[RMDB]
RNA sequence: GGGAACGACUCGAGUAGAGUCGAAAAGAUAUGGAAUAGUAGGGAGCUCGUCGGAAACGAUAGAGCGAGGAUCUACCUAUUCCUAAGUCAAAACCAGUCUAGCAUGCUUCGGCAUGCUAGACUGGAAGUUCUGAGUAUACUUCGGUAUACUCAGAACAAAAGAAACAACAACAACAAC
Reactivity to 2A3 in 0.01 (KOAc 150mM, MgCl2 10mM, bicine 150mM(pH8.5), 24C), signal-to-noise 1, nucleotides 027 to 126: g020a030u060a030u130g000g010a000a010u000a020g010u010a000g000g000g000a020g010c010u000c000g000u010c010g000g060a090a060a020c000g010a000u130a300g010a030g000c020g020a050g020g000a000u000c000u010a040c040c010u000a010u020u000c000c000u020a140a010g070u060c030a030a010a060a210c010c010a010g030u070c050u000a000g010c020a030u010g000c010u130u090c300g100g000c050a000u030g000c000u000a010g000a000c000u000g000g010a000a000
Reactivity to DMS in 0.01 (KOAc 150mM, MgCl2 10mM, bicine 150mM(pH8.5), 24C), signal-to-noise 1, nucleotides 027 to 126: g000a030u000a300u000g010g010a020a030u000a010g010u000a030g000g000g010a040g000c010u000c010g000u000c000g000g020a130a090a190c020g010a000u000a080g020a020g010c000g000a030g010g000a040u010c000u000a000c250c070u000a020u000u000c000c000u000a030a090g000u010c030a050a070a040a190c000c030a010g000u000c000u000a010g000c000a020u000g000c020u010u050c240g030g000c000a010u010g010c050u000a000g010a010c000u000g020g000a020a040
Structure probing data (2A3 and DMS) for a 177-nucleotide construct. For 2A3, 2,621 sequencing reads were counted. For 2A3 the reverse transcriptase was SuperScript II with manganese.